[RMDB]
RNA sequence: GGGAACGACUCGAGUAGAGUCGAAAAACUGCGGAUACGUCCGCAGAACCUCCCAAAUAUAUAUAUAUAUGUACGUAUGUGUAUAUGAAUGUAUACGUAGAUAUAUAUGUAUUUUUGGUGGGUUUAAGCAAUAAGCGUUUUUCGAAACGCUUAUUGCAAAAGAAACAACAACAACAAC
Reactivity to 2A3 in 0.01 (KOAc 150mM, MgCl2 10mM, bicine 150mM(pH8.5), 24C), signal-to-noise 2, nucleotides 027 to 126: a000c010u000g000c000g000g000a030u040a040c180g090u010c000c000g000c000a000g000a010a000c000c000u050c010c000c000a000a010a000u020a010u000a000u000a000u000a000u000a000u040a000u010g100u040a010c000g010u000a000u000g060u000g050u010a030u040a070u300g210a250a070u160g010u030a010u000a000c010g000u020a000g020a040u000a000u010a000u010a000u000g000u000a000u000u040u000u000u000g020g000u030g010g000g070u020u040u150a060a000